[RMDB]
RNA sequence: GGGAACGACUCGAGUAGAGUCGAAAAGAUAUGGAUACGGACUCUUUUGACGGCUACUUAUCGGAAACGAUAAGAGCCGAUAAGAGUCGUAUCCUAAGUCAAACUUGUAAUCUUCGGAUUACAAGAAGACUCUAAUAAAGUUCGCUUUAUUAGAGUCAAAAGAAACAACAACAACAAC
Reactivity to 2A3 in 0.01 (KOAc 150mM, MgCl2 10mM, bicine 150mM(pH8.5), 24C), signal-to-noise 6, nucleotides 027 to 126: g000a020u050a010u120g020g000a020u020a010c120g300g250a300c100u040c040u050u210u210u300g300a300c110g000g000c010u190a190c010u300u000a000u000c000g000g020a080a020a010c010g000a000u010a020a010g010a000g000c000c000g000a010u040a000a010g000a000g000u000c000g000u000a000u000c000c000u000a020a000g010u000c040a080a050a150c000u000u020g000u000a000a000u000c010u040u070c300g160g010a010u010u010a010c010a000a000g000a010a010
Reactivity to DMS in 0.01 (KOAc 150mM, MgCl2 10mM, bicine 150mM(pH8.5), 24C), signal-to-noise 4, nucleotides 027 to 126: g010a030u000a200u000g010g000a030u000a020c010g020g010a040c010u000c000u000u000u020u000g010a270c150g020g000c000u000a100c000u000u000a000u000c000g000g000a060a050a110c010g010a010u000a000a010g010a050g020c000c000g000a020u000a000a020g000a020g020u000c000g000u000a000u000c000c000u000a020a070g010u000c010a120a130a230c010u000u000g000u000a000a000u000c000u000u020c300g020g000a010u000u000a010c000a000a010g010a100a140
An RNA of 177 nucleotides, treated with 2A3 and DMS and read out base by base. 2A3 is a SHAPE reagent: it acylates the 2'-hydroxyl of flexible nucleotides of all four kinds. 2A3 adducts were read by reverse transcription with SuperScript II with manganese.